[RMDB]
RNA sequence: GGGAACGACUCGAGUAGAGUCGAAAACCAUCGACUGUCACCAGAUGCUGCUUCACCUGAUCACUGAUGGCUCAACGGUAUCCGGCGGUACAACUGAAUACUUGUAGCUGCCUUUUGAGCGGGUUGGAAAAUCGGAGGUUGUUCGCAACCUCCGAAAGCAUAACUUCUAGUUCGCUAGAAGUUAUGCAAAAGAAACAACAACAACAAC
Reactivity to DMS in 0.01 (KOAc 150mM, MgCl2 10mM, bicine 150mM(pH8.5), 24C), signal-to-noise 1, nucleotides 027 to 156: c020c020a100u000c040g030a140c030u000g020u010c010a070c040c000a070g010a140u000g020c020u000g000c050u000u000c050a090c000c030u020g010a070u000c040a090c030u000g000a070u000g010g000c030u000c030a090a010c040g040g000u000a020u000c010c010g010g020c020g030g030u000a130c100a080a060c020u000g010a040a040u000a030c040u000u000g010u000a050g030c030u010g000c030c010u000u000u010u000g010a020g020c020g020g000g000u000u000g020g020a040a050a140a150u000c010g020g010a050g020g020u000u000g020u010u010c250g060c030a040a030c000c000u010c000c000g010a000a000a140
Reactivity to 2A3 in 0.01 (KOAc 150mM, MgCl2 10mM, bicine 150mM(pH8.5), 24C), signal-to-noise 4, nucleotides 027 to 156: c010c000a040u070c050g110a050c030u090g030u100c040a020c080c010a050g010a100u060g020c030u030g020c010u070u070c020a030c030c020u030g040a060u050c030a030c070u040g040a050u090g120g000c000u010c020a040a050c040g060g000u060a060u070c060c030g000g020c010g010g010u050a010c020a030a050c050u130g060a070a100u100a130c030u030u060g020u040a030g060c020u030g000c010c000u040u050u030u090g030a020g030c050g020g030g000u020u070g030g010a000a060a040a120u030c000g000g010a010g000g000u000u010g000u020u030c110g010c060a010a000c000c000u000c000c000g000a000a000a000

The data come from the RNA Mapping Database (RMDB), library M2RFPK. Chemical mapping of a 207-nucleotide RNA with DMS and 2A3. Values cover nucleotides 27 to 156. For DMS, 4,475 sequencing reads were counted.